Structure probing data (DMS and 2A3) for a 177-nucleotide construct.
It was measured as part of the RMDB library OK2TST.
The RNA was probed in 150 mM KOAc, 10 mM MgCl2 and 150 mM bicine (pH 8.5) at 24 C.
2A3 adducts were read by reverse transcription with SuperScript II with manganese.
DMS adducts were read by reverse transcription with MarathonRT.
The 2A3 profile rests on 1,212 reads.
RNA sequence: GGGAACGACUCGAGUAGAGUCGAAAAGGAUCGGAAGAAGGACGAUAAAAGCCUUUAUCAACACGAGAAUAACGUUGGGAAAAUUCAUUUACGUUGGCAGUGCGAUGACGAAGAAAAUGUCUUGCGAGGUACAGUGGUGAUUCGUCACCACUGUACCAAAAGAAACAACAACAACAAC
Reactivity to DMS in 0.01 (KOAc 150mM, MgCl2 10mM, bicine 150mM(pH8.5), 24C), signal-to-noise 2, nucleotides 027 to 126: g010g010a070u010c020g010g020a080a070g030a030a030g020g030a090c050g000a060u000a040a090a140a160g000c050c040u010u010u010a120u000c080a080a070c060a020c070g010a150g030a060a110u000a050a060c070g010u000u000g000g010g000a100a070a070a130u000u000c100a060u000u000u000a060c070g000u020u000g000g000c080a070g010u010g010c080g020a040u000g030a110c030g000a090a040g000a040a040a030a090u000g000u000c040u010u000g020c100g000a080
Reactivity to 2A3 in 0.01 (KOAc 150mM, MgCl2 10mM, bicine 150mM(pH8.5), 24C), signal-to-noise 2, nucleotides 027 to 126: g000g020a020u050c020g010g040a030a000g040a000a010g080g030a010c000g050a040u100a130a170a000a010g020c000c020u010u100u010a100u100c020a020a070c040a000c060g100a120g050a180a030u130a040a020c040g020u020u070g000g020g120a050a120a120a000u110u120c060a070u050u100u110a050c060g000u060u040g000g030c040a020g010u040g060c030g000a070u080g030a030c000g020a000a020g040a070a070a020a060u120g020u050c010u020u060g110c070g070a110